Notes:
Structure probing data (2A3 and DMS) for a 207-nucleotide construct. The data come from the RNA Mapping Database (RMDB), library OK3TST.
[RMDB]
RNA sequence: GGGAACGACUCGAGUAGAGUCGAAAAGAUUCCUCUUGGUGAUGUACACUAGUGGUGUGCCAUGUGGGUGGCUACUUUAUGUAUCAUCAAAUUGCAGGCAGAGGACUCUGGACACCUAUAUCUGACAUCUGCUGUAGAACAGCCACUAAUAGGGGAGCUUAGUACAACUCUUCGGAGUUGUACUAAGAAAAGAAACAACAACAACAAC
Reactivity to 2A3 in 0.01 (KOAc 150mM, MgCl2 10mM, bicine 150mM(pH8.5), 24C), signal-to-noise 4, nucleotides 027 to 156: g030a030u010u050c020c020u010c030u060u080g040g000u000g020a050u040g030u090a030c010a020c050u040a040g050u030g070g060u110g040u060g080c010c050a120u150g060u160g210g030g000u020g010g000c020u010a010c000u030u100u030a150u150g010u020a040u110c020a010u010c020a050a060a230u150u100g060c040a010g040g030c000a000g000a010g030g020a030c030u000c020u080g040g010a020c030a060c060c010u040a070u030a080u200c070u050g050a030c010a070u040c010u080g000c000u010g040u090a030g040a150a050c020a040g000c000c010a010c020u050a010a100u040a090g020g000g000g000a020g000
Reactivity to DMS in 0.01 (KOAc 150mM, MgCl2 10mM, bicine 150mM(pH8.5), 24C), signal-to-noise 2, nucleotides 027 to 156: g030a090u000u000c000c010u010c040u000u010g020g030u010g000a020u000g010u010a040c000a050c080u000a030g050u010g040g020u010g030u000g030c000c000a170u010g030u010g030g030g040u000g000g030c040u000a030c030u000u000u010a060u010g040u010a030u000c060a050u010c010a040a090a100u000u000g000c100a070g050g020c050a100g010a090g010g010a050c070u000c020u010g020g010a140c060a050c070c020u000a090u000a130u000c030u000g000a090c030a240u010c050u010g040c010u010g040u000a100g010a040a280c040a060g030c030c020a010c040u000a060a050u000a070g000g000g020g010a180g010

The reactions ran in a buffer of 150 mM KOAc, 10 mM MgCl2 and 150 mM bicine (pH 8.5), at 24 C. Values are in units of 0.01, from 0 to 300, in steps of 10.